[RMDB]
RNA sequence: GGGAACGACUCGAGUAGAGUCGAAAAGCACGUAGGUUCAGAUGAUGGGCCCGCAUCCGUACGAAAGUAGGACGAAAGUCCAGCCUACGUGCAUGAGCACGCGGGCCCCGUGCUCUACUGCAAAAGACGAGUAUAGCCUAUUCGUAGGCUAUACUCGAAAAGAAACAACAACAACAAC
Reactivity to DMS in 0.01 (KOAc 150mM, MgCl2 10mM, bicine 150mM(pH8.5), 24C), signal-to-noise 2, nucleotides 027 to 126: g010c000a010c010g000u000a010g010g000u000u000c010a060g010a020u000g010a000u040g010g010g000c020c000c020g020c010a010u000c010c050g060u000a010c020g000a150a130a110g040u000a050g000g010a010c000g000a080a090a190g010u000c000c010a010g010c010c020u000a000c010g010u000g000c020a030u050g000a120g000c000a000c010g030c140g010g010g000c000c000c000c000g000u010g020c000u000c020u020a170c020u010g000c210a060a060a110a050g010a240
Reactivity to 2A3 in 0.01 (KOAc 150mM, MgCl2 10mM, bicine 150mM(pH8.5), 24C), signal-to-noise 6, nucleotides 027 to 126: g000c000a000c010g000u000a000g000g010u050u050c030a020g010a060u040g010a020u080g020g000g000c010c000c000g010c000a000u000c020c040g050u050a040c030g060a100a040a030g040u070a030g020g000a000c010g070a140a010a000g000u000c000c000a000g000c000c000u000a000c000g000u000g000c000a000u000g000a000g000c010a000c000g010c030g000g000g030c000c000c000c000g000u000g000c000u000c000u010a050c020u050g140c060a060a080a050a020g100a070
Structure probing data (DMS and 2A3) for a 177-nucleotide construct. Source: RMDB library OK1LIB, as collected in RNAgym. The reactions ran in a buffer of 150 mM KOAc, 10 mM MgCl2 and 150 mM bicine (pH 8.5), at 24 C. 2A3 adducts were read by reverse transcription with SuperScript II with manganese. Values cover nucleotides 27 to 126.